An RNA of 177 nucleotides, treated with 2A3 and DMS and read out base by base.
For DMS, 7,286 sequencing reads were counted.
Source: RMDB library TTRINS, as collected in RNAgym.
[RMDB]
RNA sequence: GGGAACGACUCGAGUAGAGUCGAAAAGAUAUGGAGGCUGUCAAGAGCUUGGAUUUAUAGGUGCAGAAUACGUAUCGGAAACGAUACGUAUUCAACCUAUUGUCAGCUCGAAGCAGCCUCCUAAGUCCACUCAUACUAGGUUCGCCUAGUAUGAGUGAAAAGAAACAACAACAACAAC
Reactivity to 2A3 in 0.01 (KOAc 150mM, MgCl2 10mM, bicine 150mM(pH8.5), 24C), signal-to-noise 5, nucleotides 027 to 126: g050a060u110a060u220g000g000a020g000g000c010u000g060u140c090a110a040g000a000g020c060u240u280g130g020a050u200u300u060a040u040a010g030g010u070g250c300a080g090a000a000u000a000c000g000u000a000u010c000g020g050a100a050a020c010g000a000u010a010c000g010u000a010u000u000c000a000a000c000c000u000a000u000u010g000u010c010a000g000c010u000c000g010a030a000g000c000a000g000c000c000u000c000c000u000a000a000g000u000c000
Reactivity to DMS in 0.01 (KOAc 150mM, MgCl2 10mM, bicine 150mM(pH8.5), 24C), signal-to-noise 6, nucleotides 027 to 126: g010a070u010a300u010g000g020a020g010g010c000u000g000u000c020a050a300g000a010g020c010u020u020g030g000a020u010u010u000a010u000a000g010g020u000g000c300a200g000a020a000u000a000c000g020u000a010u000c000g000g000a170a100a250c010g020a010u010a000c000g020u000a000u000u000c000a100a020c010c000u000a010u000u000g010u000c000a030g010c000u000c000g010a190a300g000c010a000g000c000c010u000c000c010u000a010a060g000u000c040